[RMDB]
RNA sequence: GGGAACGACUCGAGUAGAGUCGAAAAUAAGAGAGAUUGACACAACAGCAAGGAACGCGCUGUGAAAUCAGGAUUAAGGACUGGCAUCCAGCGGGACCUCCAGCCAGAUUCAGGAAUAUACGAAAAAGUCUAGAGUGUGCUUCGGUGCGUUUUAGACAAAAGAAACAACAACAACAAC
Reactivity to DMS in 0.01 (KOAc 150mM, MgCl2 10mM, bicine 150mM(pH8.5), 24C), signal-to-noise 9, nucleotides 027 to 126: u030a070a080g010a150g000a050g000a060u020u000g000a110c090a050c100a070a050c070a050g000c040a090a110g010g010a070a100c130g010c050g000c010u000g000u010g000a050a080a100u010c040a050g000g000a090u020u030a110a100g000g010a080c010u000g000g010c280a110u010c020c030a060g010c010g000g010g010a100c060c040u000c030c040a070g010c010c020a040g000a080u020u010c060a060g000g010a070a070u020a060u020a040c080g000a050a060a070a050a060
Reactivity to 2A3 in 0.01 (KOAc 150mM, MgCl2 10mM, bicine 150mM(pH8.5), 24C), signal-to-noise 6, nucleotides 027 to 126: u130a020a020g100a000g010a000g040a060u050u100g050a030c010a010c010a090a070c010a020g040c020a030a040g090g020a070a020c020g020c000g000c010u000g020u020g040a010a010a010u050c010a000g010g030a020u070u090a050a030g060g010a010c000u000g020g000c000a020u020c010c000a020g010c010g020g000g020a030c000c000u000c010c020a000g010c000c000a030g040a080u050u040c020a010g000g030a080a070u100a020u030a120c040g040a050a010a020a020a000

Structure probing data (DMS and 2A3) for a 177-nucleotide construct. Reactivities are given for positions 27 through 126. 2A3 adducts were read by reverse transcription with SuperScript II with manganese. The RNA was probed in 150 mM KOAc, 10 mM MgCl2 and 150 mM bicine (pH 8.5) at 24 C.